The record gives the reactivity of an RNA of 177 nucleotides to DMS and 2A3. The reactions ran in a buffer of 150 mM KOAc, 10 mM MgCl2 and 150 mM bicine (pH 8.5), at 24 C. Reactivities are given for positions 27 through 126. The 2A3 profile rests on 1,407 reads. For DMS, 1,706 sequencing reads were counted.
RNA sequence: GGGAACGACUCGAGUAGAGUCGAAAACCGAAGCCGCCACGAUUCAGUGGUGUCCACGGCAAGAUCGGUGACUGGGACGAAGUCGUAACAAGGUAGCCGUAGGAGAACCUGCGGCUGGAUCACCUCCACACUCCGUAAGCUUCGGCUUACGGAGUGUAAAAGAAACAACAACAACAAC
Reactivity to DMS in 0.01 (KOAc 150mM, MgCl2 10mM, bicine 150mM(pH8.5), 24C), signal-to-noise 2, nucleotides 027 to 126: c000c010g000a060a160g030c000c030g020c000c030a010c020g000a190u050u050c260a120g000u000g000g000u010g040u020c060c110a160c020g010g000c030a070a110g040a070u010c020g000g030u010g010a100c020u000g040g010g000a050c020g040a060a070g010u020c010g010u040a040a090c130a050a120g010g000u020a030g010c050c000g000u010a000g000g040a300g030a090a120c000c000u020g000c010g000g000c020u010g000g000a070u000c000a030c050c000u000c160c080
Reactivity to 2A3 in 0.01 (KOAc 150mM, MgCl2 10mM, bicine 150mM(pH8.5), 24C), signal-to-noise 3, nucleotides 027 to 126: c010c020g000a000a000g100c000c000g000c010c010a040c050g110a180u260u210c120a050g000u020g000g030u030g060u060c090c050a050c020g010g030c030a060a020g050a050u070c030g000g050u030g020a020c000u090g020g060g030a030c010g060a060a050g030u080c000g000u050a040a070c030a060a000g130g000u070a000g030c020c000g000u000a020g000g040a180g030a160a220c010c000u030g000c000g000g000c000u020g000g000a000u000c050a040c020c000u070c010c030